[RMDB]
RNA sequence: GGGAACGACUCGAGUAGAGUCGAAAAAGUCACCUAUUACGAUAGGUGACAUUUGAACCAGCGAACAAUUCAGUUGCGAGAUUCGAGGUUUCAGUCUUAAUCAUAGUAGCCAUUACGAUGGCUACAACUCACUCCCGACUGUUCGCAGUCGGGAGAAGAAUGAAUCUUUCUUCGGAAAGAUUCAUUCAAAAGAAACAACAACAACAAC
Reactivity to 2A3 in 0.01 (KOAc 150mM, MgCl2 10mM, bicine 150mM(pH8.5), 24C), signal-to-noise 3, nucleotides 027 to 156: a020g000u000c000a000c000c000u000a000u020u080a090c230g020a020u010a010g030g000u020g000a000c000a000u000u020u060g030a030a010c000c000a030g140c010g020a010a010c020a090a100u050u150c060a020g030u040u030g050c020g010a020g000a020u000u020c010g010a020g000g020u110u140u260c040a050g110u020c000u020u090a030a040u110c120a110u090a220g000u000a000g000c010c000a000u050u050a040c250g150a010u010g010g000c000u010a000c010a000a000c000u050c040a030c000u000c010c000c010g000a000c000u020g040u080u090c200g000c090a010g000u000c000g000g030g000a000g000a000a000
Reactivity to DMS in 0.01 (KOAc 150mM, MgCl2 10mM, bicine 150mM(pH8.5), 24C), signal-to-noise 1, nucleotides 027 to 156: a090g030u000c010a000c010c000u010a010u000u000a150c150g040a050u010a000g020g020u000g000a000c000a000u000u020u000g010a090a190c050c050a190g020c050g000a050a130c060a080a140u010u010c050a170g000u010u000g000c030g010a120g000a150u000u020c040g000a220g010g010u000u010u020c050a060g030u000c080u000u010a060a110u010c090a160u000a170g000u010a000g020c000c000a050u000u000a140c300g000a060u000g000g010c000u000a000c000a040a020c080u000c010a150c020u000c000c010c020g020a030c000u000g000u000u000c260g050c010a030g030u000c010g010g040g020a000g000a000a040

Conditions: 150 mM KOAc, 10 mM MgCl2 and 150 mM bicine (pH 8.5), 24 C. An RNA of 207 nucleotides, treated with 2A3 and DMS and read out base by base. It was measured as part of the RMDB library M2RFPK. For DMS the reverse transcriptase was MarathonRT. Values cover nucleotides 27 to 156. For 2A3 the reverse transcriptase was SuperScript II with manganese.